RNA sequence: GGGAACGACUCGAGUAGAGUCGAAAAUUGAACGGAUUCGUCCGUUCAACGCGUGCGAUCCAAACCUAGUACAAAAGUACAGACGAAAGCACAAGGAUCAAAUGAUACAGCCGUUCGCGGCUGUAAAUGGACAGAUUUAGUUCGCUAAAUCUGUCCAAAAAGAAACAACAACAACAAC
Reactivity to DMS in 0.01 (KOAc 150mM, MgCl2 10mM, bicine 150mM(pH8.5), 24C), signal-to-noise 2, nucleotides 027 to 126: u000u000g000a000a000c010g000g020a040u000u030c210g020u000c010c000g010u000u000c000a020a030c130g000c120g020u000g010c060g000a300u010c000c040a110a120a140c060c010u000a110g020u010a020c000a100a100a060a110g010u000a010c000a050g020a070c080g030a010a030a200g000c010a000c050a100a200g040g010a110u010c090a090a060a030u030g030a160u000a010c000a000g000c010c000g010u000u010c190g010c040g040g000c000u000g000u000a000a080a050
This 177-nucleotide RNA was probed chemically with DMS.
The reactions ran in a buffer of 150 mM KOAc, 10 mM MgCl2 and 150 mM bicine (pH 8.5), at 24 C.
DMS (dimethyl sulfate) methylates the pairing face of unpaired adenines and cytosines.
Source: RMDB library M2PK50, as collected in RNAgym.